Notes: An RNA of 177 nucleotides, treated with DMS and 2A3 and read out base by base. The data come from the RNA Mapping Database (RMDB), library RFMREP. For DMS, 5,830 sequencing reads were counted. For 2A3 the reverse transcriptase was SuperScript II with manganese. DMS adducts were read by reverse transcription with MarathonRT. High DMS reactivity at an A or C suggests that its Watson-Crick edge is free.

RNA sequence: GGGAACGACUCGAGUAGAGUCGAAAAGGGAUACACUUGAUCUCUGAACUUCACAGGUAAGUUCGCUUGUUGAUAACUACUGGUCUGCUGAUGCUAAAAUCUUCUUGAAGUUCGCUUCAAGAAGAAAGAAUAUCUAAGAGUUCGCUCUUAGAUAUUCAAAAGAAACAACAACAACAAC
Reactivity to DMS in 0.01 (KOAc 150mM, MgCl2 10mM, bicine 150mM(pH8.5), 24C), signal-to-noise 5, nucleotides 027 to 126: g000g000g000a030u000a100c120a110c170u010u010g010a070u000c030u000c030u010g000a080a090c080u000u000c050a130c120a130g010g010u010a040a050g010u010u010c040g010c100u000u000g000u010u000g020a090u010a060a080c060u000a060c090u010g000g000u010c030u000g010c050u000g000a090u000g010c090u000a070a060a070a120u000c000u000u000c000u000u000g000a020a000g010u000u010c270g010c010u000u000c010a000a000g010a000a010g000a010a030a070
Reactivity to 2A3 in 0.01 (KOAc 150mM, MgCl2 10mM, bicine 150mM(pH8.5), 24C), signal-to-noise 3, nucleotides 027 to 126: g040g000g000a020u070a100c100a020c170u120u200g070a040u040c030u010c030u060g010a010a010c010u070u070c050a040c030a150g070g040u120a060a030g040u070u050c040g000c080u070u150g120u110u130g080a090u060a150a000c020u050a010c040u080g040g020u030c010u020g050c020u040g040a060u070g070c010u060a040a050a100a210u000c000u010u000c000u010u000g010a010a000g000u010u140c140g030c100u000u010c000a010a010g010a000a000g000a000a000a000